RNA sequence: GGGAACGACUCGAGUAGAGUCGAAAAGCGAAAGUUGCCAUGAGACCGUAACUUUCGUAGUCAUUGAUAAAGGGGAAGGUCUCGCUCUUUUGUCAUUGCGGUUGCCUAGAGGCAUGGUCGUUUACCGAAAAGAGCUCAUUCUUCGGAAUGAGCUCAACCAACAAACUUUGUUCGCAAAGUUUGUUGGAAAAGAAACAACAACAACAAC
Reactivity to DMS in 0.01 (KOAc 150mM, MgCl2 10mM, bicine 150mM(pH8.5), 24C), signal-to-noise 2, nucleotides 027 to 156: g010c000g010a030a030a040g000u000u000g030c020c040a120u000g030a160g030a090c050c070g060u010a060a020c010u000u000u000c010g030u010a050g020u000c130a120u020u000g010a040u000a040a040a080g030g000g040g000a040a050g000g010u010c010u000c020g000c060u000c030u000u000u000u000g010u000c010a050u000u010g030c050g010g030u010u010g010c010c040u000a150g000a190g020g040c040a120u010g020g010u010c060g040u000u000u000a120c010c020g000a050a080a100a210g000a020g010c000u000c000a010u000u000c000u000u000c300g030g000a000a000u010g010a030g030c040u000c000a000a040
Reactivity to 2A3 in 0.01 (KOAc 150mM, MgCl2 10mM, bicine 150mM(pH8.5), 24C), signal-to-noise 4, nucleotides 027 to 156: g010c000g000a000a000a000g000u010u010g000c040c030a120u130g060a050g010a130c040c030g010u010a000a010c000u000u000u000c000g000u010a010g030u030c030a040u030u100g040a050u080a060a040a040g020g000g000g020a000a070g040g030u020c010u020c030g000c010u030c000u000u040u010u060g040u040c020a050u020u120g040c060g120g000u060u050g020c000c020u070a080g020a100g080g010c020a030u080g020g000u010c020g000u010u040u070a300c020c000g020a040a050a010a050g000a000g000c000u000c000a000u000u000c010u070u060c150g110g000a000a000u000g000a000g010c000u000c000a000a000